[RMDB]
RNA sequence: GGGAACGACUCGAGUAGAGUCGAAAAUGAUGGAUGGCGAGGCUAAUUCUAAAAGAAGCAGCCGUAGCGAAAGCGAUUACUCGCACAGCAAUGGAGGAGUAACGUAAUAAAUGCGUUUAGUCAUCUGCUACCAAAUAGUCUUCGGACUAUUUGGUAGAAAAGAAACAACAACAACAAC
Reactivity to DMS in 0.01 (KOAc 150mM, MgCl2 10mM, bicine 150mM(pH8.5), 24C), signal-to-noise 4, nucleotides 027 to 126: u010g000a120u000g020g000a010u010g020g010c010g020a070g010g000c010u000a090a270u010u000c000u000a100a100a120a180g000a020a040g010c300a010g030c000c000g000u000a100g000c000g000a120a120a170g010c020g000a130u000u010a000c010u000c000g010c080a290c040a000g010c300a080a130u000g000g010a240g000g000a020g000u000a000a010c000g000u010a070a090u010a020a080a070u020g010c010g010u000u000u000a050g020u000c000a000u000c010u000g000
Reactivity to 2A3 in 0.01 (KOAc 150mM, MgCl2 10mM, bicine 150mM(pH8.5), 24C), signal-to-noise 3, nucleotides 027 to 126: u210g060a050u200g010g000a000u010g010g020c000g010a040g000g000c020u020a010a070u000u020c040u100a110a140a110a110g010a010a000g000c010a000g000c020c000g000u000a000g000c010g010a040a010a000g010c000g010a020u010u000a000c000u010c020g070c040a020c000a030g030c030a040a150u060g040g000a120g020g030a010g020u010a010a000c010g010u030a030a060u080a080a170a030u180g010c020g030u090u130u140a010g000u010c000a010u010c000u010g030

Chemical mapping of a 177-nucleotide RNA with DMS and 2A3. It was measured as part of the RMDB library RFMREP. The RNA was probed in 150 mM KOAc, 10 mM MgCl2 and 150 mM bicine (pH 8.5) at 24 C.